Structure probing data (2A3) for a 207-nucleotide construct. Values cover nucleotides 27 to 156. The reactions ran in a buffer of 150 mM KOAc, 10 mM MgCl2 and 150 mM bicine (pH 8.5), at 24 C.

[RMDB]
RNA sequence: GGGAACGACUCGAGUAGAGUCGAAAAACUGAUACCUUACGAGGUAUCAGAAUGACUUCGUGGUAGAGCGCCACGAACGGAAAAUAAAGGAAGCUCGAUUGAAACGCACCGUGUACGCACGGUGCGAAAAAGUCGAUCCAGUUCGCUGGAUCGACAACGAAGGAACAAGGUUCGCCUUGUUCCUUCGAAAAGAAACAACAACAACAAC
Reactivity to 2A3 in 0.01 (KOAc 150mM, MgCl2 10mM, bicine 150mM(pH8.5), 24C), signal-to-noise 1, nucleotides 027 to 156: a000c000u010g000a000u000a000c000c010u000u050a070c240g160a000g010g000u000a000u000c010a010g000a000a020u140g020a020c040u000u000c020g000u000g000g010u060a120g020a000g070c000g010c000c000a000c050g000a020a020c050g030g020a040a080a080a010u120a100a080a000g190g020a050a020g000c000u000c030g120a150u000u170g090a050a000a090c020g000c010a000c010c030g000u000g020u020a000c200g000c050a000c010g000g000u010g100c000g000a000a000a000a000a000g010u000c000g000a000u000c000c000a040g080u080u140c220g060c090u000g000g000a000u000c000g010a020c000a000a000